An RNA of 177 nucleotides, treated with 2A3 and DMS and read out base by base. Reactivities are rounded to 0.1 and cut off at 0 and 3. The 2A3 profile rests on 7,458 reads. For DMS the reverse transcriptase was MarathonRT.

[RMDB]
RNA sequence: GGGAACGACUCGAGUAGAGUCGAAAAGAAGCGGCGAAAAAUGCGUGUAAAUAAAAGGUCAAUAUCACCUGACAGUGAUACCAAAUUAAAUGGGUCGAAGUCUCGCCAAAAUACGCAACAAAUAGAACAGUAAUCUACUUUUCGAAGUAGAUUACUGAAAAGAAACAACAACAACAAC
Reactivity to 2A3 in 0.01 (KOAc 150mM, MgCl2 10mM, bicine 150mM(pH8.5), 24C), signal-to-noise 5, nucleotides 027 to 126: g080a050a010g050c080g040g010c040g060a060a010a030a020a050u100g010c050g010u020g030u060a020a130a120u120a020a130a070a010g040g010u040c040a060a060u060a030u200c020a010c010c010u020g020a010c010a010g020u010g060a010u080a300c010c020a020a070a040u130u130a020a110a110u120g030g020g000u020c020g010a060a010g040u000c000u010c010g000c000c000a060a090a010a000u100a010c040g000c030a010a040c020a050a180a060u220a070g100a100a000
Reactivity to DMS in 0.01 (KOAc 150mM, MgCl2 10mM, bicine 150mM(pH8.5), 24C), signal-to-noise 6, nucleotides 027 to 126: g010a120a130g030c110g010g010c030g010a020a080a070a080a070u000g010c040g010u000g010u010a050a090a100u010a030a050a070a050g000g000u010c140a080a140u010a060u000c060a020c010c020u000g010a090c130a090g010u010g000a010u010a040c030c030a050a070a100u010u010a040a080a080u000g010g000g010u000c020g000a050a080g000u000c040u000c020g020c020c030a040a050a060a060u010a030c040g020c040a050a070c150a070a070a070u020a090g010a080a130